Annotation
Source: RMDB library VIROID, as collected in RNAgym. Chemical mapping of a 177-nucleotide RNA with DMS and 2A3. The 2A3 profile rests on 3,991 reads. For DMS, 2,073 sequencing reads were counted. Values cover nucleotides 27 to 126. DMS adducts were read by reverse transcription with MarathonRT.

[RMDB]
RNA sequence: GGGAACGACUCGAGUAGAGUCGAAAACUCAGAAUCCAGCGAGAGGCGUAGGAGAGAGGGCCGCGGUGCUCUGGAGUAGAGGCUUCUAGCUUCGAAACACCAUCGAUCGUCCCUGCUUCUUUUACCUGGAUUAUACAUACUUCGGUAUGUAUAAUCCAAAAGAAACAACAACAACAAC
Reactivity to DMS in 0.01 (KOAc 150mM, MgCl2 10mM, bicine 150mM(pH8.5), 24C), signal-to-noise 2, nucleotides 027 to 126: c010u000c030a180g010a140a100u010c040c030a080g000c090g000a120g030a060g020g030c110g030u000a030g010g020a020g010a060g000a030g000g020g010c150c000g010c000g010g000u020g000c020u000c020u000g000g020a050g030u000a090g000a010g000g000c010u000u020c250u010a050g010c000u000u000c000g000a200a090a150c020a020c150c000a030u000c010g010a110u000c020g000u000c000c010c000u010g000c030u010u000c010u000u010u010u010a040c040c100u010
Reactivity to 2A3 in 0.01 (KOAc 150mM, MgCl2 10mM, bicine 150mM(pH8.5), 24C), signal-to-noise 3, nucleotides 027 to 126: c010u030c010a030g130a060a100u060c050c020a030g100c050g090a150g010a030g180g060c070g040u040a020g040g030a000g010a000g010a010g020g000g000c010c000g040c020g010g000u010g000c010u000c010u010g010g000a010g010u010a000g010a010g000g010c000u250u100c130u300a020g000c000u020u020c000g020a010a010a000c000a010c000c060a000u010c000g030a300u010c000g010u000c000c000c000u000g080c020u090u060c000u000u010u030u040a040c030c030u040